[RMDB]
RNA sequence: GGGAACGACUCGAGUAGAGUCGAAAAUACGCACACAAAUUGAUUUAGCUAAAGAAGUCUUUGAUAUACCAGUAGAUAUUGCCUCACAACCUUUAGCCACUACUCUCAUAUUAGAACUUGCAAGCUACCCAUCCCGUACCUUCGGGUACGGGAUGGGAAAAGAAACAACAACAACAAC
Reactivity to 2A3 in 0.01 (KOAc 150mM, MgCl2 10mM, bicine 150mM(pH8.5), 24C), signal-to-noise 1, nucleotides 027 to 126: u040a000c000g000c000a020c000a000c000a140a000a260u070u080g030a060u000u000u110a000g000c000u180a300a000a000g010a030a000g040u000c010u060u100u140g030a020u030a010u030a150c000c000a000g000u060a010g060a040u070a170u060u060g070c000c000u070c040a040c000a000a290c000c080u000u000u110a000g010c000c000a000c000u110a080c000u000c000u000c060a140u000a110u170u000a060g100a000a030c000u000u040g000c080a010a010g000c000u040a010